RNA sequence: GGGAACGACUCGAGUAGAGUCGAAAAGAUAUGGAGAGCACUCAGCGCAGGAUGUUUGUCGGAAACGAUGAUAUCCUGAACUACGCUGACUGCUCUCCUAAGUCAAACUAGAGGUUCGCCUCUAGAACGCCUUAGAUAAGUUCGCUUAUCUAAGGCGAAAAGAAACAACAACAACAAC
Reactivity to DMS in 0.01 (KOAc 150mM, MgCl2 10mM, bicine 150mM(pH8.5), 24C), signal-to-noise 2, nucleotides 027 to 126: g000a020u010a300u000g030g000a000g010a010g020c000a020c200u000c000a000g000c010g000c020a030g010g000a030u000g010u000u000u000g050u010c000g030g000a120a120a170c000g020a020u010g000a020u000a010u000c000c030u000g000a030a060c120u010a300c060g000c010u000g020a000c080u000g010c000u010c000u000c010c000u000a000a020g000u000c040a110a090a260c010u010a020g020a010g010g000u000u010c270g000c020c010u000c000u000a010g010a120a170
Reactivity to 2A3 in 0.01 (KOAc 150mM, MgCl2 10mM, bicine 150mM(pH8.5), 24C), signal-to-noise 2, nucleotides 027 to 126: g040a020u070a050u160g000g000a000g000a000g000c000a000c010u010c010a000g000c020g000c000a000g010g000a010u030g120u130u190u300g060u010c000g010g050a050a050a050c010g010a010u020g030a000u020a000u030c010c000u010g020a040a010c050u110a040c030g000c000u010g000a000c000u000g000c000u000c000u000c000c000u000a010a000g000u000c010a010a040a110c010u000a000g010a000g050g000u090u140c300g110c040c000u040c000u000a010g000a030a050